RNA sequence: GGGAACGACUCGAGUAGAGUCGAAAAGCAGAUACUGACCCGUAGUUUUGUGGCCACUACUAGAAUUUAUUGACAUACAUAGCAACUAAGGACUGCAGGACAGCUGAGUUUGGUAUUUACUUCAAGAGAAUAAAAGAUCAGAUGUCUGAAAACAGAGGAUUACGAGACGAUUCGUCGUCUCGUAAUCAAAAGAAACAACAACAACAAC
Reactivity to DMS in 0.01 (KOAc 150mM, MgCl2 10mM, bicine 150mM(pH8.5), 24C), signal-to-noise 1, nucleotides 027 to 156: g000c020a030g020a090u020a110c050u000g020a110c050c030c040g010u000a180g020u000u000u000u060g020u000g020g030c000c020a040c050u000a080c020u020a120g000a130a100u000u010u000a070u000u020g030a080c040a170u020a100c110a130u000a060g000c080a080a120c070u060a080a130g010g030a080c070u000g000c060a230g040g040a090c050a060g050c050u000g040a040g010u010u000u000g020g000u000a110u000u000u000a090c050u010u000c050a100a230g020a290g020a020a050u000a040a040a150a050g040a070u020c120a050g030a110u000g000u000c030u020g000a070a020a080a130c050a080g000a140g010
Reactivity to 2A3 in 0.01 (KOAc 150mM, MgCl2 10mM, bicine 150mM(pH8.5), 24C), signal-to-noise 3, nucleotides 027 to 156: g000c010a010g030a130u060a060c020u040g090a060c000c040c020g020u050a070g000u020u080u080u230g070u050g030g000c020c000a020c040u070a030c010u050a060g040a110a210u090u150u130a150u080u200g050a030c000a030u110a060c000a000u090a080g020c020a030a060c010u060a030a020g030g030a020c000u030g000c040a020g000g040a020c020a010g000c030u020g020a020g070u050u090u040g000g000u030a060u060u050u020a050c040u050u100c070a110a040g090a000g030a170a030u160a060a100a030a000g040a030u030c020a020g070a120u070g040u040c000u040g030a060a060a030a010c060a040g130a050g170

Description:
Structure probing data (DMS and 2A3) for a 207-nucleotide construct. The reactions ran in a buffer of 150 mM KOAc, 10 mM MgCl2 and 150 mM bicine (pH 8.5), at 24 C. Reactivities are given for positions 27 through 156. 2A3 is a SHAPE reagent: it acylates the 2'-hydroxyl of flexible nucleotides of all four kinds. Values are in units of 0.01, from 0 to 300, in steps of 10. The DMS profile rests on 1,636 reads.